Chemical mapping of a 177-nucleotide RNA with 2A3. 2A3 adducts were read by reverse transcription with SuperScript II with manganese. The reactions ran in a buffer of 150 mM KOAc, 10 mM MgCl2 and 150 mM bicine (pH 8.5), at 24 C. For 2A3, 691 sequencing reads were counted.
[RMDB]
RNA sequence: GGGAACGACUCGAGUAGAGUCGAAAAGUCUCUUUCAGAGCAACCGUGCUUUUUCCAUAACAACUCGAUGACUGCGCCGCCCCCAAGCUGGGCUUUCCUCUCGUACUUGGUAGCCGGUCGGACGACCAGUCCAGCCUCUGUUCGCAGAGGCUGGACUAAAAGAAACAACAACAACAAC
Reactivity to 2A3 in 0.01 (KOAc 150mM, MgCl2 10mM, bicine 150mM(pH8.5), 24C), signal-to-noise 1, nucleotides 027 to 126: g040u000c000u000c000u000u150u150c130a080g000a000g040c010a040a100c010c000g100u160g100c100u080u090u040u090u000c020c020a090u070a170a090c070a030a040c010u000c060g100a060u030g050a060c010u050g000c000g050c020c010g060c020c000c000c000c010a030a000g060c040u080g000g000g080c000u000u070u010c010c010u010c020u020c020g010u050a050c020u050u030g040g000u010a040g090c040c000g010g010u040c020g030g050a040c130g010a030c020c000